[RMDB]
RNA sequence: GGGAACGACUCGAGUAGAGUCGAAAAAGACGAAGUACUACAGUCAAUCGCAUUGACUCCACCACUUCGCAGAUUCAAUGCGAUUGAUCCAGACAUGAAGUACUACAGUCAAACGCAUUGACUACACCACUUCAUAGGAUCAAUGCGUUUGAAUCAACGUAUCCACGUAUUUCGAUACGUGGGUACGAAAAGAAACAACAACAACAAC
Reactivity to DMS in 0.01 (KOAc 150mM, MgCl2 10mM, bicine 150mM(pH8.5), 24C), signal-to-noise 6, nucleotides 027 to 156: a120g020a120c050g010a080a050g010u000a040c010u000a170c090a120g010u000c000a000a010u010c070g000c000a300u000u010g000a020c050u010c040c030a120c070c060a160c220u010u000c040g050c010a070g000a050u000u010c030a020a020u000g010c000g020a050u000u000g010a000u010c010c040a220g000a130c100a120u000g010a120a070g030u000a040c020u000a100c090a250g010u010c000a010a020a050c060g000c000a040u000u000g020a040c030u000a090c070a160c090c150a090c090u000u000c070a110u000a170g010g030a040u000c000a010a010u000g000c000g010u000u010u000g010a050a060u000c010a080a150
Reactivity to 2A3 in 0.01 (KOAc 150mM, MgCl2 10mM, bicine 150mM(pH8.5), 24C), signal-to-noise 6, nucleotides 027 to 156: a000g090a030c070g030a030a000g010u010a010c010u010a020c040a000g010u000c000a000a000u010c010g010c020a010u000u000g000a000c000u000c010c030a110c010c020a130c100u200u110c100g010c070a000g000a010u020u000c000a000a000u000g000c010g020a010u000u010g000a000u000c020c010a030g050a070c010a090u100g030a030a000g000u000a000c010u040a050c050a010g100u000c000a000a010a010c020g010c000a030u010u020g000a010c000u050a030c080a060c050c020a080c030u110u060c070a050u020a090g020g020a000u000c000a000a000u010g000c010g000u000u010u010g000a000a020u090c030a010a030